[RMDB]
RNA sequence: GGGAACGACUCGAGUAGAGUCGAAAACACUGUCCGCCAGGAUACACGGGCAAGCGUUGUGAGCUGGACAUAGACGAGUGCAGCAGCAAUCCCUGCCAGCAUGGUGGCACCUGUUAUGAUAAGCUCAGUUGCGGAAGCGAUUCGUCGCUUCCGCAACAAAAGAAACAACAACAACAAC
Reactivity to DMS in 0.01 (KOAc 150mM, MgCl2 10mM, bicine 150mM(pH8.5), 24C), signal-to-noise 1, nucleotides 027 to 126: c020a050c190u000g010u010c000c010g000c060c030a090g000g020a090u030a070c280a080c120g000g000g000c010a030a060g000c090g030u000u030g000u020g000a120g000c010u000g030g030a060c030a050u000a070g010a160c220g020a090g000u010g040c040a060g000c020a300g000c020a010a110u000c180c030c030u010g050c020c050a080g010c060a060u010g000g010u000g000g000c000a010c100c040u000g000u000u000a080u010g000a090u000a120a080g030c060u000c050a210
Reactivity to 2A3 in 0.01 (KOAc 150mM, MgCl2 10mM, bicine 150mM(pH8.5), 24C), signal-to-noise 1, nucleotides 027 to 126: c070a000c030u070g040u040c000c010g100c020c030a040g020g040a120u100a200c070a010c090g070g000g000c020a020a030g090c060g050u020u000g030u010g050a180g030c000u010g000g050a000c020a030u130a110g230a150c120g020a050g070u050g030c000a030g010c020a000g000c000a010a080u040c000c010c000u020g000c000c010a040g000c060a100u040g010g000u080g010g020c010a060c030c040u010g070u030u000a070u140g100a060u070a130a080g010c010u050c050a070

Source: RMDB library OK2TST, as collected in RNAgym.
This 177-nucleotide RNA was probed chemically with DMS and 2A3.
For 2A3 the reverse transcriptase was SuperScript II with manganese.
The 2A3 profile rests on 901 reads.
For DMS, 790 sequencing reads were counted.
For DMS the reverse transcriptase was MarathonRT.